[RMDB]
RNA sequence: GGGAACGACUCGAGUAGAGUCGAAAAGUGAACUACAAACAAGCCGCAAUCGACGCCAUGAACCUCAAAACGAAAUUCGUCACCAUCGACUCAGCCCAAGGCCUCACAGUCGGCAAAGUCGGCGUCGUCAUCUUCGGCAACACGAAAUUCAGCAAAGCCCAUCUGAGCUAUUCGUAGCUCAGAUGGGAAAAGAAACAACAACAACAAC
Reactivity to 2A3 in 0.01 (KOAc 150mM, MgCl2 10mM, bicine 150mM(pH8.5), 24C), signal-to-noise 2, nucleotides 027 to 156: g000u040g020a150a060c030u140a090c090a070a080a020c060a130a020g020c020c000g040c000a000a080u180c000g000a000c040g010c020c010a090u170g000a090a150c030c000u100c030a030a090a050a050c090g090a130a060a020u300u090c050g030u040c000a040c020c020a050u050c020g000a000c010u020c060a020g000c010c040c070a070a080g110g000c000c030u090c000a110c000a050g050u100c050g000g000c060a020a020a020g050u100c100g010g000c000g000u000c000g010u000c010a020u020c050u100u000c010g000g000c000a020a010c060a020c010g040a010a000a120u090u080c010a020g040c020a070a220a000g000